[RMDB]
RNA sequence: GGGAACGACUCGAGUAGAGUCGAAAAAGAUUGAGAAUACAUGAUGAGGAUUAGGGCUACCUUUGGUGAAUAUAUGGUAUACUGGAGGCUAACUGGAGGCUGCCUUUAUGCAACUGGCCUUGGUUGUCAGUAGUUGACUCUAGCCAACUGUAAAUAGCGGUAGCGAAAAAUUCGUUUUUCGCUACCGAAAAGAAACAACAACAACAAC
Reactivity to DMS in 0.01 (KOAc 150mM, MgCl2 10mM, bicine 150mM(pH8.5), 24C), signal-to-noise 2, nucleotides 027 to 156: a100g000a160u030u020g020a150g000a170a100u000a070c040a060u000g010a110u010g020a100g020g020a160u000u000a080g010g010g000c020u000a060c030c030u010u010u000g000g030u010g020a100a120u000a100u000a060u000g020g000u000a100u000a080c070u000g000g000a100g010g000c060u000a060a120c050u010g000g000a300g030g040c010u010g020c020c050u000u000u000a060u040g000c000a030a040c020u010g070g000c000c040u000u000g010g000u000u000g010u000c010a080g000u010a020g030u000u000g010a040c000u010c140u000a140g040c000c010a010a030c000u000g040u000a060a070a130u000a190g010
Reactivity to 2A3 in 0.01 (KOAc 150mM, MgCl2 10mM, bicine 150mM(pH8.5), 24C), signal-to-noise 3, nucleotides 027 to 156: a000g060a030u080u110g000a050g050a090a140u140a130c050a060u110g010a060u070g030a070g040g030a030u040u110a050g010g020g020c020u010a050c020c000u020u040u080g020g000u060g050a090a010u130a020u020a030u150g070g030u070a020u010a160c050u060g050g010a010g030g040c020u040a070a000c040u060g040g010a010g020g000c020u000g020c000c000u060u080u030a080u080g050c030a040a030c060u040g020g000c010c000u030u070g090g020u070u050g010u020c020a000g000u030a000g010u070u040g030a020c020u020c060u060a010g020c030c030a070a040c050u030g020u170a110a140a090u120a100g050
Source: RMDB library OK3TST, as collected in RNAgym. Structure probing data (DMS and 2A3) for a 207-nucleotide construct. The reactions ran in a buffer of 150 mM KOAc, 10 mM MgCl2 and 150 mM bicine (pH 8.5), at 24 C. For DMS, 3,071 sequencing reads were counted. For 2A3, 1,781 sequencing reads were counted.